[RMDB]
Chemical mapping of a 170-nucleotide RNA with DMS and 2A3. The DMS profile rests on 8,567 reads. The RNA was probed in 150 mM KOAc, 10 mM MgCl2 and 150 mM bicine (pH 8.5) at 24 C. For 2A3 the reverse transcriptase was SuperScript II with manganese.

RNA sequence: GGGAACGACUCGAGUAGAGUCGAAAACAAGAUGGUAAUGCUGCUAUUACAGAUUAUAAUUACUAUUCUUAUAAUCUGCCUACUAUGUGUGACAUCAAACAAAUGUUGUUCUGCAUGGAAGUUGUAAAGACGAUUCUCUUCGGAGAAUCGAAAAGAAACAACAACAACAAC
Reactivity to DMS in 0.01 (KOAc 150mM, MgCl2 10mM, bicine 150mM(pH8.5), 24C), signal-to-noise 5, nucleotides 027 to 129: c130a080a080g030a050u010g000g000u020a130a040u000g070c050u020g000c140u020a100u040u030a180c060a020g020a000u020u020a070u030a140a020u010u040a120c160u040a070u060u030c090u050u010a030u000a000a110u010c060u050g060c160c090u010a050c080u040a000u000g020u040g030u000g040a020c000a030u050c060a040a050a120c300a030a170a100u020g000u000u000g050u000u030c050u000g040c060a070u000g120g010a110a030g060u050u020g050u000a080a070a060g000a050
Reactivity to 2A3 in 0.01 (KOAc 150mM, MgCl2 10mM, bicine 150mM(pH8.5), 24C), signal-to-noise 5, nucleotides 027 to 129: c060a000a020g030a020u020g010g000u080a080a020u120g040c050u020g000c110u070a060u170u190a130c020a000g010a010u040u030a010u120a210a080u120u030a030c060u090a180u300u180c010u000u030a030u000a020a010u010c010u040g040c010c030u060a120c020u000a010u080g020u000g040u060g030a020c000a010u030c020a000a020a200c080a050a170a080u180g020u020u020g040u090u040c040u050g000c020a000u060g040g040a100a080g000u030u040g050u070a030a120a030g090a040